[RMDB]
RNA sequence: GGGAACGACUCGAGUAGAGUCGAAAAGGCAAAACCCGAAGGAUCUGACAGCUAAAGGCAGUGGGCCAGCAAAUGUAGCAAUAGAUUCUUGAAGGGUAGACAUAUAUGGCCAGAUCGUAUAUGUGAUAUGGGCCAGACACAUAUAUGAUCACACGUAGCCUAAAUUAAAUUUCGAUUUAAUUUAGGCAAAAGAAACAACAACAACAAC
Reactivity to DMS in 0.01 (KOAc 150mM, MgCl2 10mM, bicine 150mM(pH8.5), 24C), signal-to-noise 3, nucleotides 027 to 156: g020g050c020a070a060a110a210c010c010c010g010a100a040g000g000a050u000c020u000g030a190c190a240g010c030u000a070a090a150g020g040c040a190g030u000g030g050g000c030c020a180g010c080a080a080a120u000g010u000a070g020c030a100a150u000a040g000a060u000u000c010u000u000g000a120a160g040g010g010u000a060g020a130c080a110u000a130u000a130u000g010g010c050c030a110g000a020u000c010g010u000a010u000a010u010g010u020g010a120u010a060u020g000g020g000c050c030a120g010a210c000a000c010a020u010a020u000a020u000g000a030u000c000a040c080a060c050g020u000a230
Reactivity to 2A3 in 0.01 (KOAc 150mM, MgCl2 10mM, bicine 150mM(pH8.5), 24C), signal-to-noise 5, nucleotides 027 to 156: g060g000c020a040a040a030a060c010c000c010g020a020a010g020g010a000u020c010u030g050a060c060a070g010c010u100a090a050a050g060g000c040a060g080u180g050g110g010c020c000a020g010c050a100a040a130u220g040u150a030g000c000a000a040u030a130g010a010u020u020c010u020u100g080a110a060g000g010g000u020a010g040a000c030a000u240a000u050a060u130g080g000c010c010a010g010a010u010c000g000u000a000u000a000u020g030u010g050a040u050a090u210g040g030g020c020c030a010g030a030c000a000c000a000u010a000u000a010u010g000a000u020c020a010c000a000c060g070u120a030
Chemical mapping of a 207-nucleotide RNA with DMS and 2A3.
The data come from the RNA Mapping Database (RMDB), library OK3TST.
For DMS the reverse transcriptase was MarathonRT.